[RMDB]
RNA sequence: GGGAACGACUCGAGUAGAGUCGAAAAGGCUGCGCCUUGUUUCCAUGUGCUAAAAAAUAAGGGAUAUAAAGUAACAAUGGAAACUCAUGCAUUAUCUGACGAUUGUUUAGAUUGUGUAUAUGAUUGGCAACCGCAUUCAGUUCGCUGAAUGCGGUUGAAAAGAAACAACAACAACAAC
Reactivity to DMS in 0.01 (KOAc 150mM, MgCl2 10mM, bicine 150mM(pH8.5), 24C), signal-to-noise 2, nucleotides 027 to 126: g000g030c040u010g010c040g000c020c010u020u000g010u010u000u000c000c010a030u000g020u000g010c010u000a010a010a160a130a080a100u030a090a110g070g050g010a090u010a140u050a090a140a050g020u010a060a040c030a040a060u000g000g030a060a010a010c020u030c070a060u000g000c020a010u000u000a000u000c000u000g020a080c030g000a130u010u040g000u010u000u010a000g000a030u010u000g010u000g010u010a070u020a080u000g000a120u020u020g000g000
Reactivity to 2A3 in 0.01 (KOAc 150mM, MgCl2 10mM, bicine 150mM(pH8.5), 24C), signal-to-noise 5, nucleotides 027 to 126: g060g000c070u150g030c100g020c020c000u010u060g010u010u000u000c020c020a030u020g010u000g010c010u120a050a040a030a100a110a140u200a150a160g120g070g030a070u070a020u030a130a160a000g020u030a170a090c070a090a110u010g020g010a010a010a000c010u000c050a010u010g010c000a000u010u020a000u030c010u000g000a010c040g200a300u180u220g060u080u040u010a010g000a020u010u000g000u000g050u010a000u010a040u140g180a160u050u140g010g040
The record gives the reactivity of an RNA of 177 nucleotides to DMS and 2A3. For 2A3 the reverse transcriptase was SuperScript II with manganese. The reactions ran in a buffer of 150 mM KOAc, 10 mM MgCl2 and 150 mM bicine (pH 8.5), at 24 C. Source: RMDB libraries RFM100 and RFMREP, as collected in RNAgym.